[RMDB]
RNA sequence: GGGAACGACUCGAGUAGAGUCGAAAAUAUUUCUCGUAGCUGCGCCGGUGCCCGUUGCAAUGCUUCCCGGCACCUGACGCGCAUCACGACGGCAUCAGCCGAGCCGCAUGUCCCUGUCGACGGGGCAUGUAGUCCGGAGUUUCGACUCCGGACUACAAAAAGAAACAACAACAACAAC
Reactivity to 2A3 in 0.01 (KOAc 150mM, MgCl2 10mM, bicine 150mM(pH8.5), 24C), signal-to-noise 3, nucleotides 027 to 126: u220a070u030u110u020c030u000c020g020u030a050g010c080u050g000c000g010c010c060g010g000u010g000c000c000c040g020u000u040g000c100a170a300u230g000c000u050u010c010c020c000g000g010c000a000c000c010u040g070a060c010g000c000g040c000a020u010c010a000c030g050a010c010g000g000c020a160u050c060a140g050c000c070g010a020g040c020c010g070c030a020u040g020u000c010c010c030u090g160u210c050g070a100c030g000g000g020g020c000a020
Reactivity to DMS in 0.01 (KOAc 150mM, MgCl2 10mM, bicine 150mM(pH8.5), 24C), signal-to-noise 2, nucleotides 027 to 126: u040a020u030u000u000c000u020c000g000u000a120g030c050u000g010c000g000c000c100g020g000u000g000c000c020c290g020u010u020g000c040a230a140u050g060c060u020u000c040c090c140g020g000c000a000c000c000u000g080a090c120g020c040g000c010a000u010c060a000c080g000a130c030g000g000c040a070u020c220a100g010c030c000g010a100g000c050c060g050c070a060u000g020u010c000c000c010u000g000u030c110g020a160c300g030g000g000g020c000a000
This 177-nucleotide RNA was probed chemically with 2A3 and DMS.
Source: RMDB library RFM100, as collected in RNAgym.
The DMS profile rests on 2,443 reads.
For DMS the reverse transcriptase was MarathonRT.
Values cover nucleotides 27 to 126.
The 2A3 profile rests on 1,515 reads.
For 2A3 the reverse transcriptase was SuperScript II with manganese.